[RMDB]
Notes
Structure probing data (2A3 and DMS) for a 207-nucleotide construct. 2A3 adducts were read by reverse transcription with SuperScript II with manganese. The 2A3 profile rests on 1,113 reads. The data come from the RNA Mapping Database (RMDB), library M2RFPK. For DMS, 2,045 sequencing reads were counted.
RNA sequence: GGGAACGACUCGAGUAGAGUCGAAAAGUCCAAAAUUGAUUCGGCGGCCCUGUCAUGAGGCCGAAACGAAGGCACGUACCCCUUCGAAUGGCGUCGGGGAGUCAGCGGCUAUAUAUGCGCCUGAUGCUAAAGUCGUGCUGGUUCGCCAGCACGACAACAUCCUAAGCCUGUUCGCAGGCUUAGGAUGAAAAGAAACAACAACAACAAC
Reactivity to 2A3 in 0.01 (KOAc 150mM, MgCl2 10mM, bicine 150mM(pH8.5), 24C), signal-to-noise 2, nucleotides 027 to 156: g050u020c020c000a030a040a060a070u160u160g040a090u150u050c030g080g000c010g020g030c050c010c050u100g250u230c170a150u100g030a100g000g020c010c000g010a000a000a000c010g000a000a000g000g020c060a000c240g180u240a100c010c030c000c020u000u020c030g080a130a120u160g010g000c010g020u000c020g010g000g000g000a000g070u050c050a020g040c010g070g000c050u000a000u030a040u000a010u300g040c050g030c000c000u000g000a000u070g020c050u100a230a000a000g000u000c000g000u000g000c010u000g000g020u030u030c080g010c070c000a000g010c000a000c000g000a000c000a000a000
Reactivity to DMS in 0.01 (KOAc 150mM, MgCl2 10mM, bicine 150mM(pH8.5), 24C), signal-to-noise 1, nucleotides 027 to 156: g000u010c050c050a120a080a080a190u000u000g010a220u010u000c040g040g020c000g010g000c020c010c000u000g030u000c250a160u000g010a060g010g090c020c010g010a020a030a110c060g010a030a050g020g010c060a140c100g000u000a150c020c020c000c030u000u000c030g010a080a070u000g010g040c040g000u020c050g020g010g010g000a110g020u000c030a110g010c000g000g000c060u000a090u000a120u010a130u000g010c000g020c030c000u000g000a140u000g000c020u010a040a100a140g000u020c000g010u010g020c050u000g020g020u000u000c300g000c030c000a000g000c010a020c000g020a000c000a000a130